An RNA of 207 nucleotides, treated with DMS and 2A3 and read out base by base.
The reactions ran in a buffer of 150 mM KOAc, 10 mM MgCl2 and 150 mM bicine (pH 8.5), at 24 C.
The 2A3 profile rests on 3,447 reads.
DMS adducts were read by reverse transcription with MarathonRT.

[RMDB]
RNA sequence: GGGAACGACUCGAGUAGAGUCGAAAACAUCUUUCCUCCCUACACAGUGACUCCAGCUUGGGAGGGGCAGGCCUAGGCUGAGCCAGCACUCCCUGUGGUGUCUGCCUGCCACGUGCAGCUCUGGAGUAAAACCUGGAGAAGUUCGCUUCUCCAGGAACAUUCAUAAAGAGUUCGCUCUUUAUGAAUGAAAAGAAACAACAACAACAAC
Reactivity to DMS in 0.01 (KOAc 150mM, MgCl2 10mM, bicine 150mM(pH8.5), 24C), signal-to-noise 2, nucleotides 027 to 156: c070a090u010c100u000u000u010c030c020u000c000c010c010u000a260c160a180c120a120g020u000g010a110c010u000c020c020a080g020c070u000u000g010g000g030a050g040g000g010g050c030a060g040g030c020c040u000a080g100g030c040u010g040a100g040c040c020a200g030c030a090c020u000c030c060c030u010g040u020g020g020u000g000u000c010u010g020c020c010u000g000c020c010a040c050g010u000g010c030a070g020c010u000c020u030g000g010a090g020u000a040a050a090a170c010c010u010g010g010a000g020a030a030g040u000u010c300g050c020u000u000c010u010c000c010a010g000g000a020a050
Reactivity to 2A3 in 0.01 (KOAc 150mM, MgCl2 10mM, bicine 150mM(pH8.5), 24C), signal-to-noise 4, nucleotides 027 to 156: c020a100u110c100u090u170u070c030c010u060c000c000c030u160a070c110a030c030a130g090u060g130a020c000u000c000c000a020g010c050u070u060g010g000g010a010g010g000g000g010c010a010g010g000c000c040u140a060g000g060c080u100g050a010g070c000c020a020g040c020a030c030u070c020c030c010u040g000u070g040g050u040g020u010c010u030g000c010c000u010g010c010c020a060c080g050u140g010c020a030g000c000u020c010u070g000g010a000g000u010a000a050a000a000c000c000u010g000g010a000g000a000a000g000u060u160c160g050c120u000u000c000u000c000c000a000g000g000a000a000